[RMDB]
RNA sequence: GGGAACGACUCGAGUAGAGUCGAAAAUCGUAUGGUCUUGUACCGACGACAGAUCAUUCAAAUGUCUGCCCUAUCAUCUUUUGAUGGUAGUAUCUAGGACUACCAUGGUUGCAACGGGUAACGGGCAUCAGGAUACAUGGUUCGCCAUGUAUCCUGAAAAAGAAACAACAACAACAAC
Reactivity to DMS in 0.01 (KOAc 150mM, MgCl2 10mM, bicine 150mM(pH8.5), 24C), signal-to-noise 3, nucleotides 027 to 126: u010c020g010u000a030u010g030g020u010c020u000u010g040u020a040c040c020g000a080c040g000a030c040a010g000a060u010c110a070u000u010c230a090a150a080u000g020u010c020u010g010c050c010c000u000a140u010c120a050u010c040u000u000u000u020g010a000u010g010g000u000a010g010u000a050u000c190u000a130g020g010a040c010u000a000c010c010a010u000g020g000u010u010g020c080a050a130c130g000g020g030u010a040a070c150g020g000g010c080a160

This 177-nucleotide RNA was probed chemically with DMS. The RNA was probed in 150 mM KOAc, 10 mM MgCl2 and 150 mM bicine (pH 8.5) at 24 C. For DMS, 2,447 sequencing reads were counted. It was measured as part of the RMDB library RFMREP.